[RMDB]
RNA sequence: GGGAACGACUCGAGUAGAGUCGAAAAUCGCGGUCAACUGUGUGUCGUUGACUCGCUGUUGGUAACGCCGUCAGCGCUGUCGUCAUCAGAAGACAGGCAUCAAGACUUACCGUGAUGAUGCAGAUGCGAAUUCUAGAGGGUUCGCCCUCUAGAAUUCAAAAGAAACAACAACAACAAC
Reactivity to DMS in 0.01 (KOAc 150mM, MgCl2 10mM, bicine 150mM(pH8.5), 24C), signal-to-noise 4, nucleotides 027 to 126: u060c080g000c050g010g010u010c050a040a070c050u020g030u040g020u000g010u010c060g010u020u010g000a030c020u010c010g040c000u000g010u020u000g000g020u000a120a140c240g020c040c000g000u010c030a050g020c010g020c040u000g010u010c050g010u000c050a090u030c090a080g000a090a050g000a030c030a040g000g010c020a030u030c050a060a100g010a120c070u020u010a070c120c070g040u010g000a110u010g000a020u000g010c000a050g000a070u010g000c300
Reactivity to 2A3 in 0.01 (KOAc 150mM, MgCl2 10mM, bicine 150mM(pH8.5), 24C), signal-to-noise 6, nucleotides 027 to 126: u060c010g000c020g010g010u030c040a030a030c060u030g000u020g030u010g040u200c050g120u070u230g000a010c020u000c040g000c000u010g030u030u100g000g020u070a070a020c120g050c100c010g040u030c010a000g010c020g010c110u060g030u050c040g040u010c020a090u030c030a110g070a140a000g070a070c010a010g000g040c000a030u050c030a070a070g140a230c030u070u060a040c010c020g030u010g020a040u010g010a010u090g010c050a060g010a110u100g050c020
An RNA of 177 nucleotides, treated with DMS and 2A3 and read out base by base. DMS adducts were read by reverse transcription with MarathonRT. It was measured as part of the RMDB library OK1LIB. The reactions ran in a buffer of 150 mM KOAc, 10 mM MgCl2 and 150 mM bicine (pH 8.5), at 24 C.